[RMDB]
RNA sequence: GGGAACGACUCGAGUAGAGUCGAAAAGUGAAGGUGAGUUUUACAGAGCAAUAUCUUCAGGGAAGGUACUUGAUGUGAGGGUGAUGCAUGAAAUAACAAGCAGCACCUUGUAUGCUGUAACGAAUACGGUUAACCCCUCUUUCGAGAGGGGUUAACCAAAAGAAACAACAACAACAAC
Reactivity to DMS in 0.01 (KOAc 150mM, MgCl2 10mM, bicine 150mM(pH8.5), 24C), signal-to-noise 1, nucleotides 027 to 126: g050u000g020a030a040g000g010u000g000a150g010u000u000u000u000a060c040a060g030a050g010c050a020a110u000a020u000c030u000u000c010a210g000g000g000a080a100g000g000u000a050c140u000u020g000a060u000g020u020g000a120g050g020g000u000g000a020u000g010c040a110u000g000a030a080a060u020a080a040c280a040a240g000c010a000g020c050a040c020c100u020u000g010u010a080u000g040c000u010g000u000a030a120c110g000a070a070u010a130c140